[RMDB]
RNA sequence: GGGAACGACUCGAGUAGAGUCGAAAAGAUAUGGACUGCAGGGAGCAGGUAGCGUCGGAAACGACGCUACCUGCGAAGAACUGUGUCCUAAGUCAAAUCCUAAAUCCCGUUCGCGGGAUUUAGGAAAGAUAUUCUGUUCGUUCGCGAACAGAAUAUCAAAAGAAACAACAACAACAAC
Reactivity to DMS in 0.01 (KOAc 150mM, MgCl2 10mM, bicine 150mM(pH8.5), 24C), signal-to-noise 1, nucleotides 027 to 126: g000a040u020a300u030g000g000a010c000u010g060c010a000g030g010g000a080g020c010a000g000g000u040a000g000c040g090u030c010g020g000a080a170a250c040g010a070c000g020c000u010a000c000c010u000g010c010g010a060a080g000a120a130c010u010g010u000g010u000c000c020u000a050a060g030u000c070a150a150a160u000c000c000u010a000a010a010u000c010c020c000g030u000u010c180g040c000g020g000g000a000u000u010u000a000g000g000a000a000a010